Conditions: 150 mM KOAc, 10 mM MgCl2 and 150 mM bicine (pH 8.5), 24 C. An RNA of 207 nucleotides, treated with 2A3 and read out base by base.
[RMDB]
RNA sequence: GGGAACGACUCGAGUAGAGUCGAAAAAAUGGAAUCAUUGUGUCUACUGGUGGCAGUGCUCCUUCUUCUGGAACUAAGACCUCUAGGCCAGCAGAACGUAAUGUCACGGGAACAGGAAGCAAAAAUUUUGCUAGUGGAUCACUAGGGAUGAUUGUGACGUGCUCCAUUUAUUCGUAAAUGGAGCACGAAAAGAAACAACAACAACAAC
Reactivity to 2A3 in 0.01 (KOAc 150mM, MgCl2 10mM, bicine 150mM(pH8.5), 24C), signal-to-noise 2, nucleotides 027 to 156: a010a020u170g050g010a020a060u080c050a120u120u100g040u040g000u000c030u060a110c070u140g050g000u030g000g030c020a010g080u020g080c010u060c030c020u050u040c010u020u000c010u040g070g030a170a180c000u010a080a050g110a220c070c040u060c060u040a030g010g010c000c010a000g000c020a020g020a040a020c010g000u060a010a130u040g000u000c000a000c010g040g070g010a120a040c030a030g060g070a040a010g030c050a030a070a100a180a170u060u200u150u100g050c000u010a010g040u030g130g070a130u110c010a020c090u050a050g070g050g040a010u050g030a040u050u040g060u060g020a000

Overview: It was measured as part of the RMDB library OK3TST. For 2A3 the reverse transcriptase was SuperScript II with manganese.